[RMDB]
RNA sequence: GGGAACGACUCGAGUAGAGUCGAAAACUUUAUUUAUGUCAUCUCCAUAAACCAUCUGCAAAUGAGGGUUAUUUGGCAUUUUUGUCAUUUUGGAGCCACAGAAAUAAAGGAUGACAAGCAGAGAGCCAAUAGAUCACUGGUUCGCCAGUGAUCUAUUAAAAGAAACAACAACAACAAC
Reactivity to DMS in 0.01 (KOAc 150mM, MgCl2 10mM, bicine 150mM(pH8.5), 24C), signal-to-noise 4, nucleotides 027 to 126: c010u000u000u000a000u000u000u000a050u010g010u000c090a160u000c010u000c000c010a030u010a090a050a020c010c010a080u000c010u010g010c300a090a200a140u020g000a010g000g010g010u000u000a120u010u010u020g030g000c020a030u000u010u000u000u030g060u000c000a010u010u000u000u000g020g000a010g020c300c300a030c030a020g020a000a000a000u000a010a020a020g010g000a140u020g010a040c120a060a160g010c060a050g010a150g010a080g010c050c060
Reactivity to 2A3 in 0.01 (KOAc 150mM, MgCl2 10mM, bicine 150mM(pH8.5), 24C), signal-to-noise 2, nucleotides 027 to 126: c000u040u030u020a020u020u030u020a020u040g020u000c030a090u050c010u000c010c010a060u070a020a050a030c000c000a060u010c020u090g080c050a060a080a120u180g000a030g030g000g000u020u050a110u050u000u010g000g000c000a090u130u040u070u300u060g000u010c000a010u010u000u060u100g000g000a000g020c010c020a010c000a000g030a020a010a000u040a060a000a000g030g040a060u090g020a050c080a130a000g060c050a030g100a020g020a010g160c020c040